[RMDB]
This 177-nucleotide RNA was probed chemically with DMS and 2A3.
The 2A3 profile rests on 889 reads.
It was measured as part of the RMDB library OK1LIB.
RNA sequence: GGGAACGACUCGAGUAGAGUCGAAAAGUAUGUAUGGAUAACCAUACGUACAAAUAAUUGACUCAUGGUGGUGGCUGGGGGCACCCUCAUGGUGGUGGGUGUGGAAAAUAAAGAUCCGAAAGGAUCAGGAUAGGUUGAUCUUCGGAUCAACCUAUCCAAAAGAAACAACAACAACAAC
Reactivity to DMS in 0.01 (KOAc 150mM, MgCl2 10mM, bicine 150mM(pH8.5), 24C), signal-to-noise 1, nucleotides 027 to 126: g000u000a000u000g030u000a010u020g000g000a300u080a100a290c010c070a050u000a000c000g000u000a000c000a000a180a110u010a030a160u070u000g000a010c130u020c000a100u000g000g000u010g030g000u020g000g000c010u040g000g000g000g000g030c000a000c040c060c050u050c060a150u020g000g030u000g000g010u020g000g010g070u000g000u040g000g050a030a040a050a080u010a130a020a030g000a020u000c000c000g000a090a150a100g000g000a060u000c000a040
Reactivity to 2A3 in 0.01 (KOAc 150mM, MgCl2 10mM, bicine 150mM(pH8.5), 24C), signal-to-noise 2, nucleotides 027 to 126: g000u000a000u010g020u000a000u010g000g060a290u140a270a210c000c000a000u000a020c000g000u000a000c000a020a170a000u230a020a100u130u110g080a000c000u020c090a060u110g000g050u060g000g000u010g040g020c110u060g020g000g000g030g030c020a050c030c000c000u090c050a090u120g160g000u010g020g030u050g000g030g000u010g030u040g000g110a000a100a000a030u220a110a080a050g000a000u000c000c000g040a040a040a000g000g000a000u000c000a020